[RMDB]
RNA sequence: GGGAACGACUCGAGUAGAGUCGAAAAUGGGCUUAGGAGUGUCUGGGCGGGCCAGGGUCGGGAGGGUUUCACGAGAAGCCUUGGGAAAUGCAGCUGUCCCCGGCUUGGAACUGGGGGGUCAGUACCCACUAUAGAUUGGGUUCGCCCAAUCUAUAGUAAAAGAAACAACAACAACAAC
Reactivity to DMS in 0.01 (KOAc 150mM, MgCl2 10mM, bicine 150mM(pH8.5), 24C), signal-to-noise 3, nucleotides 027 to 126: u000g000g000g020c080u000u000a090g000g010a150g000u000g000u000c140u010g010g020g000c200g000g000g010c150c130a090g000g010g000u010c110g010g010g000a200g000g010g000u000u000u010c040a060c170g010a190g000a030a040g000c000c010u010u010g010g000g000a070a060a050u010g020c150a070g010c030u010g020u020c000c000c010c200g000g000c040u000u000g000g000a060a130c040u000g000g020g010g010g030g000u010c020a020g000u000a090c020c010c020
Reactivity to 2A3 in 0.01 (KOAc 150mM, MgCl2 10mM, bicine 150mM(pH8.5), 24C), signal-to-noise 2, nucleotides 027 to 126: u040g050g020g010c070u130u150a070g050g080a080g090u140g050u110c150u140g050g060g210c140g040g000g060c070c070a030g010g010g100u190c100g000g030g070a130g020g020g010u030u070u070c070a050c060g080a050g020a200a010g030c010c040u030u050g030g000g000a040a100a020u200g020c080a060g000c040u010g000u010c000c000c000c000g000g020c050u060u090g070g060a070a040c020u030g000g000g030g000g000g010u120c010a000g010u020a060c000c000c000